[RMDB]
RNA sequence: GGGAACGACUCGAGUAGAGUCGAAAAUAAGGCACGGUUUACUUCUGUGCGUACGCUAAGUAACUCGGUCCAAAAUUCAUUAUCUAGCUCAUUGGCAGAGUCAGUGCUCUCAGACAUAGUUGAUAAGCCAUCGAACCAAACGCCAGUAAAGACAAACCCUAAUAACGAGCUUCGGCUCGUUAUUAGGAAAAGAAACAACAACAACAAC
Reactivity to 2A3 in 0.01 (KOAc 150mM, MgCl2 10mM, bicine 150mM(pH8.5), 24C), signal-to-noise 3, nucleotides 027 to 156: u120a030a030g070g000c030a010c080g010g040u050u050u080a030c030u050u060c020u050g030u020g030c010g040u080a040c050g010c070u050a060a030g040u040a120a050c000u010c060g050g030u100c040c020a010a040a040a100u160u070c080a090u100u180a040u120c050u040a020g080c040u070c050a050u020u070g010g000c030a020g020a010g100u020c050a030g010u060g070c000u000c010u020c070a010g020a080c030a070u050a020g050u050u050g060a170u020a050a040g010c020c000a040u090c040g070a060a040c030c000a190a060a010c070g050c060c040a060g040u180a090a090a020g090a020c120a040a050a070c010
Reactivity to DMS in 0.01 (KOAc 150mM, MgCl2 10mM, bicine 150mM(pH8.5), 24C), signal-to-noise 1, nucleotides 027 to 156: u000a140a140g010g010c010a090c000g000g010u000u000u010a010c050u030u010c020u010g050u000g020c020g020u010a050c110g000c030u000a070a140g050u000a050a030c000u000c030g010g000u000c030c020a020a070a180a140u000u000c070a140u010u000a100u020c010u000a050g030c030u000c040a120u010u010g010g030c050a070g000a090g000u000c030a110g060u000g020c050u000c050u000c030a210g020a040c040a090u000a040g010u010u010g010a100u020a020a020g010c060c000a070u000c050g010a070a070c010c000a050a090a080c060g010c000c000a090g020u000a090a020a130g010a150c080a030a160a090c110